[RMDB]
RNA sequence: GGGAACGACUCGAGUAGAGUCGAAAAGGGGUCCAAGUGUAAGGCCCUGGAGAGCAACAGCUGUACUGAAGCCUCCACGGUACAGACAUGCUCUCCCUGGCUUGAGCUUGGACGGAGGCACCCAAAAGGCUAGAUUUGCUUCGGCAAAUCUAGCCAAGUUAUGAUGUCCGUUCGCGGACAUCAUAACAAAAGAAACAACAACAACAAC
Reactivity to 2A3 in 0.01 (KOAc 150mM, MgCl2 10mM, bicine 150mM(pH8.5), 24C), signal-to-noise 2, nucleotides 027 to 156: g010g010g060g000u000c000c010a000a000g000u030g100u170a130a140g020g000c000c000c000u000g000g000a000g000a000g000c020a020a120c040a160g000c010u000g000u000a000c000u030g000a120a020g010c000c000u010c020c010a010c020g000g010u000a010c000a000g070a090c080a170u270g000c020u000c000u020c000c000c000u000g010g000c000u050u180g060a030g010c000u000u010g010g000a000c000g000g000a010g000g000c010a000c030c000c000a040a190a020a030g010g000c000u020a010g000a030u000u000u040g000c020u090u130c260g010g000c000a000a000a000u010c000u000a010g020c000c000a000a000